[RMDB]
RNA sequence: GGGAACGACUCGAGUAGAGUCGAAAAGAUGUGAUGCAGUGUCGUCUACGAUGUGUCACAUUGAAGCGGUGGGCAGUGUGUGGAAGUACGUCGACGAUGUGUACGCUGCACCACAUGAUCAGGCAUGGGCUUAAUCAUGGUUCGCCAUGGUUGAGCCAAAAGAAACAACAACAACAAC
Reactivity to 2A3 in 0.01 (KOAc 150mM, MgCl2 10mM, bicine 150mM(pH8.5), 24C), signal-to-noise 8, nucleotides 027 to 126: g070a000u000g000u000g000a000u000g000c000a000g020u000g010u050c000g000u000c010u010a000c020g030a030u030g040u010g030u030c000a000c000a000u000u020g020a050a000g030c010g020g030u060g010g020g000c000a000g000u000g000u000g000u030g040g060a070a010g050u060a010c010g010u000c010g010a020c010g010a020u030g070u000g010u000a010c020g000c000u000g000c000a030c000c000a000c000a020u030g010a050u080c050a010g050g000c040a040u130g080
Reactivity to DMS in 0.01 (KOAc 150mM, MgCl2 10mM, bicine 150mM(pH8.5), 24C), signal-to-noise 9, nucleotides 027 to 126: g010a010u000g010u000g000a030u000g000c010a020g020u010g010u000c020g000u000c010u010a000c090g010a040u000g020u000g010u010c000a000c010a010u000u000g000a090a100g010c050g000g010u000g000g010g000c010a020g010u000g010u000g010u020g010g010a090a120g010u020a020c010g010u000c030g010a120c150g000a030u010g000u000g020u030a030c050g000c020u000g000c010a040c020c010a010c010a020u000g010a090u010c080a100g010g000c110a130u020g010
This 177-nucleotide RNA was probed chemically with 2A3 and DMS.
The data come from the RNA Mapping Database (RMDB), library OK1LIB.
Reactivities are rounded to 0.1 and cut off at 0 and 3.
For DMS, 87,968 sequencing reads were counted.